[RMDB]
RNA sequence: GGGAACGACUCGAGUAGAGUCGAAAAACACGUUACGACGUGACCAGAGUGGUAAUGAUGACCUGGUUGGACUAGAGUCUCUGAGCAUUUCUCUGAGGAUCUUUGAAACCACCUGAUCCACUCUAAAAGCGCUAUCUAUGUUCGCAUAGAUAGCGCUAAAAGAAACAACAACAACAAC
Reactivity to 2A3 in 0.01 (KOAc 150mM, MgCl2 10mM, bicine 150mM(pH8.5), 24C), signal-to-noise 6, nucleotides 027 to 126: a010c030a010c010g010u020u110a070c230g030a000c000g070u020g120a020c010c030a000g010a010g000u020g010g010u100a100a070u180g170a080u100g070a060c020c050u030g040g000u060u130g040g050a080c040u020a020g000a000g040u020c010u010c020u030g000a000g040c160a260u100u260u110c020u000c010u020g010a010g030g010a040u030c000u050u130u080g070a060a050a030c000c020a000c010c000u000g010a020u000c000c010a000c000u000c010u020a060a070a020
Reactivity to DMS in 0.01 (KOAc 150mM, MgCl2 10mM, bicine 150mM(pH8.5), 24C), signal-to-noise 3, nucleotides 027 to 126: a130c010a010c010g000u010u000a130c170g000a050c020g000u000g000a300c010c040a040g000a020g030u000g000g010u000a060a080u040g010a140u000g010a100c190c090u010g000g010u010u020g010g000a190c120u000a010g000a050g000u000c000u020c000u010g000a010g000c300a200u020u000u010c000u000c000u010g000a040g010g000a050u000c000u000u040u010g000a180a040a020c000c030a080c060c020u000g010a150u020c000c020a010c030u000c030u000a010a070a130